About this RNA: Structure probing data (DMS and 2A3) for a 177-nucleotide construct. For 2A3 the reverse transcriptase was SuperScript II with manganese. Source: RMDB library OK1LIB, as collected in RNAgym.
RNA sequence: GGGAACGACUCGAGUAGAGUCGAAAAGUCUCAGCAGAGAUUGCGUGGUGGACGACCGAUGAAAUAGCUGAAAAUAUCCGAAACUGGUAUCCUAAGAGUGGGGGCAUUCUGAGGAUCAGUAUCAGGGUGAUGCUAGCUAUUUCGAUAGCUAGCAUCAAAAAGAAACAACAACAACAAC
Reactivity to DMS in 0.01 (KOAc 150mM, MgCl2 10mM, bicine 150mM(pH8.5), 24C), signal-to-noise 4, nucleotides 027 to 126: g000u000c010u000c010a140g050c060a050g000a120g000a080u020u000g020c040g030u000g020g000u000g000g010a050c060g010a170c070c010g000a070u030g010a050a070a090u000a050g000c030u000g010a090a070a070a120u040a030u010c030c010g000a120a060a040c000u000g000g020u020a080u000c000c000u010a090a010g000a030g040u010g000g010g020g000g040c020a010u020u000c020u030g000a070g000g000a020u010c020a000g000u000a020u020c060a260g000g000g020
Reactivity to 2A3 in 0.01 (KOAc 150mM, MgCl2 10mM, bicine 150mM(pH8.5), 24C), signal-to-noise 5, nucleotides 027 to 126: g030u000c000u000c030a030g010c030a040g040a040g070a150u120u160g040c090g100u090g030g040u070g040g010a060c010g020a040c030c010g010a080u090g020a040a060a120u100a040g030c100u060g060a030a080a010a040u170a070u040c000c030g010a080a000a000c000u000g030g030u110a060u010c000c000u020a070a000g020a010g000u060g000g060g000g100g090c010a020u030u000c010u000g040a000g000g000a010u020c000a010g000u000a020u160c040a060g010g000g010
DMS adducts were read by reverse transcription with MarathonRT. The RNA was probed in 150 mM KOAc, 10 mM MgCl2 and 150 mM bicine (pH 8.5) at 24 C. The DMS profile rests on 6,837 reads. Reactivities are given for positions 27 through 126.